Chemical mapping of a 177-nucleotide RNA with DMS and 2A3. High DMS reactivity at an A or C suggests that its Watson-Crick edge is free. 2A3 adducts were read by reverse transcription with SuperScript II with manganese. For DMS, 3,467 sequencing reads were counted. The data come from the RNA Mapping Database (RMDB), library OK2TST. The RNA was probed in 150 mM KOAc, 10 mM MgCl2 and 150 mM bicine (pH 8.5) at 24 C. 2A3 is a SHAPE reagent: it acylates the 2'-hydroxyl of flexible nucleotides of all four kinds. For DMS the reverse transcriptase was MarathonRT.
RNA sequence: GGGAACGACUCGAGUAGAGUCGAAAAAUUUGAAACUGGUGCAUCAGGAAACUGGGAGGAUGAUGUCCUGAAAAUUGUGGAAUUAGCUGAGUCCCCACAUAUACCCUUAUUUAAUAUGAAGACAGAAGACCAAUAGAAUAUUCGUAUUCUAUUGGUCAAAAGAAACAACAACAACAAC
Reactivity to DMS in 0.01 (KOAc 150mM, MgCl2 10mM, bicine 150mM(pH8.5), 24C), signal-to-noise 4, nucleotides 027 to 126: a080u000u000u010g020a100a080a080c060u000g000g010u010g010c050a090u000c030a040g020g000a080a070a090c100u000g000g010g000a070g010g000a080u000g010a060u000g010u000c030c030u000g000a070a060a060a100u000u010g010u000g020g000a110a070u010u010a080g010c050u000g000a130g000u000c050c050c010c030a070c080a030u000a080u000a110c040c020c020u000u010a110u000u000u000a070a070u010a080u010g000a070a070g000a080c100a080g010a110a090
Reactivity to 2A3 in 0.01 (KOAc 150mM, MgCl2 10mM, bicine 150mM(pH8.5), 24C), signal-to-noise 2, nucleotides 027 to 126: a020u060u020u070g040a020a040a030c020u030g000g010u040g000c010a030u030c010a030g070g010a040a090a030c030u090g030g030g030a040g050g010a000u040g000a000u030g050u040c020c000u050g020a030a070a100a100u080u040g030u040g020g020a140a080u100u060a100g000c020u010g010a010g050u060c020c050c020c010a010c010a000u160a010u040a060c010c010c030u020u020a070u090u150u000a120a040u090a040u170g020a040a020g030a070c040a050g220a080a000